[RMDB]
Chemical mapping of a 177-nucleotide RNA with DMS and 2A3.
For 2A3 the reverse transcriptase was SuperScript II with manganese.
High 2A3 reactivity points to a flexible backbone, as in loops and unpaired stretches.
Values are in units of 0.01, from 0 to 300, in steps of 10.
Reactivities are given for positions 27 through 126.
Conditions: 150 mM KOAc, 10 mM MgCl2 and 150 mM bicine (pH 8.5), 24 C.
RNA sequence: GGGAACGACUCGAGUAGAGUCGAAAAGGAACGGAAUGGUGAGACUCUGUAUCUUGGUUAUGCAUGGUUCCACCUGUGCAACUUCAAGAAGACAAAUGCCAAGGGUGAGUCCCGGACAAUCUCCAACCCACAAUCACACAUUCGUGUGUGAUUGUGGAAAAGAAACAACAACAACAAC
Reactivity to DMS in 0.01 (KOAc 150mM, MgCl2 10mM, bicine 150mM(pH8.5), 24C), signal-to-noise 3, nucleotides 027 to 126: g020g040a160a110c160g000g000a090a090u010g000g030u000g010a080g000a020c010u000c020u010g020u000a060u020c010u000u010g010g010u010u000a110u000g010c010a000u000g010g010u000u060c230c170a090c200c020u000g020u000g020c040a050a220c070u020u010c050a050a110g000a080a090g020a110c170a030a100a110u000g010c000c030a030a080g010g000g000u020g010a050g000u000c000c010c010g000g020a150c120a030a050u000c110u000c000c040a090a150c120
Reactivity to 2A3 in 0.01 (KOAc 150mM, MgCl2 10mM, bicine 150mM(pH8.5), 24C), signal-to-noise 3, nucleotides 027 to 126: g060g010a070a030c070g020g100a060a090u100g080g010u100g040a120g010a030c000u040c020u050g070u160a120u090c010u030u040g020g000u090u090a040u100g000c000a000u020g020g000u200u140c070c010a040c020c000u010g020u020g000c020a070a070c000u060u090c100a150a140g100a030a010g040a150c060a040a150a030u130g000c020c010a000a010g040g020g030u060g020a010g000u000c010c020c000g000g040a040c040a020a080u030c050u010c060c000a070a070c010